RNA sequence: GGGAACGACUCGAGUAGAGUCGAAAAUCCAAGGACGAAACCGUCUCUCCUGACUCCCAGUUUCCGUAGGUUAAUUAUCCUCACGGAUUACUUCUGGUAACUAGGAGUUUGUAGUGAUGUAAGUUUCACAAGAGCUAUAGUUCGCUAUAGCUCUUGUAAAAGAAACAACAACAACAAC
Reactivity to DMS in 0.01 (KOAc 150mM, MgCl2 10mM, bicine 150mM(pH8.5), 24C), signal-to-noise 4, nucleotides 027 to 126: u000c010c010a190a140g020g010a100c160g010a030a030a060c070c010g010u000c000u000c010u000c030c010u000g000a010c010u000c020c000c020a000g000u000u000u000c000c010g010u000a010g000g000u000u010a080a090u010u010a050u000c000c000u000c260a170c270g010g000a010u000u000a030c010u000u000c050u010g020g010u000a020a010c010u010a050g000g000a020g000u000u010u000g000u000a020g010u000g000a030u010g010u010a060a090g000u000u000u000c010
Reactivity to 2A3 in 0.01 (KOAc 150mM, MgCl2 10mM, bicine 150mM(pH8.5), 24C), signal-to-noise 3, nucleotides 027 to 126: u000c010c000a040a070g170g030a060c090g050a050a010a020c030c000g020u000c010u000c000u020c010c020u000g010a010c000u000c000c000c000a000g000u000u010u020c010c020g010u030a020g030g050u070u130a110a060u240u100a070u020c000c010u080c050a060c090g010g010a000u000u030a020c000u010u020c030u110g000g010u010a010a010c000u000a000g000g000a010g000u000u010u030g010u010a020g010u010g010a010u020g030u090a250a070g000u000u010u020c020